Notes: Structure probing data (DMS and 2A3) for a 177-nucleotide construct.

RNA sequence: GGGAACGACUCGAGUAGAGUCGAAAAUUUGGAAGACAGGGAUGCAAGAAACAGCUAGAAGCCUUUAGAAACUGCUAGAUUAUGUGAGGGUGUUGGCACAGGCCAUAUCUAGAACGGACUGAUGUGCCGUAGAACGUCUAUUCGUAGACGUUCUACGAAAAGAAACAACAACAACAAC
Reactivity to DMS in 0.01 (KOAc 150mM, MgCl2 10mM, bicine 150mM(pH8.5), 24C), signal-to-noise 5, nucleotides 027 to 126: u010u010u010g010g000a080a070g010a060c070a060g000g000g020a080u010g000c090a070a080g000a110a070a080c100a070g020c030u000a060g000a080a110g020c060c030u000u010u010a100g010a110a080a090c080u000g000c020u000a030g010a070u010u000a050u010g010u010g000a080g010g000g010u000g010u010u000g020g010c030a040c050a080g010g000c030c020a040u010a040u000c090u000a050g000a070a100c160g010g010a060c060u010g000a090u010g000u000g010c060
Reactivity to 2A3 in 0.01 (KOAc 150mM, MgCl2 10mM, bicine 150mM(pH8.5), 24C), signal-to-noise 3, nucleotides 027 to 126: u020u030u050g050g010a040a000g030a020c040a020g000g000g050a040u080g020c010a030a010g050a130a140a030c010a040g040c020u030a010g020a060a000g050c000c020u080u150u060a090g060a080a130a030c050u060g020c000u030a030g020a150u120u130a080u180g080u040g030a100g010g050g040u050g030u060u100g020g000c020a000c020a040g010g000c010c010a050u030a030u100c050u010a030g030a120a020c060g020g060a020c020u050g080a120u060g040u040g040c050
2A3 adducts were read by reverse transcription with SuperScript II with manganese.